Annotation
Source: RMDB library OK2TST, as collected in RNAgym. The record gives the reactivity of an RNA of 177 nucleotides to DMS. The DMS profile rests on 938 reads. DMS adducts were read by reverse transcription with MarathonRT.

[RMDB]
RNA sequence: GGGAACGACUCGAGUAGAGUCGAAAAACUGAAUUUUCUGCAGCUCAUCAACCGUAAUCCCCCGACAGUCAGGAUGCUUCGCACUGCCAAACCCGAUACGCAACUGCCCGUUACGCCCCUGCUGCUGAGGUAACACACGAUUCGUCGUGUGUUACCUAAAAGAAACAACAACAACAAC
Reactivity to DMS in 0.01 (KOAc 150mM, MgCl2 10mM, bicine 150mM(pH8.5), 24C), signal-to-noise 1, nucleotides 027 to 126: a130c130u000g000a090a080u000u000u010u010c020u000g030c030a060g000c020u000c080a040u010c060a080a050c110c000g000u010a140a100u000c030c030c000c070c040g020a060c080a040g000u010c060a070g000g000a040u010g000c100u000u000c080g000c050a110c060u000g040c010c010a050a120a080c000c000c060g010a100u000a040c070g000c000a020a060c080u000g000c010c010c080g000u000u000a080c120g040c020c010c000c100u010g000c060u000g000c050u000g010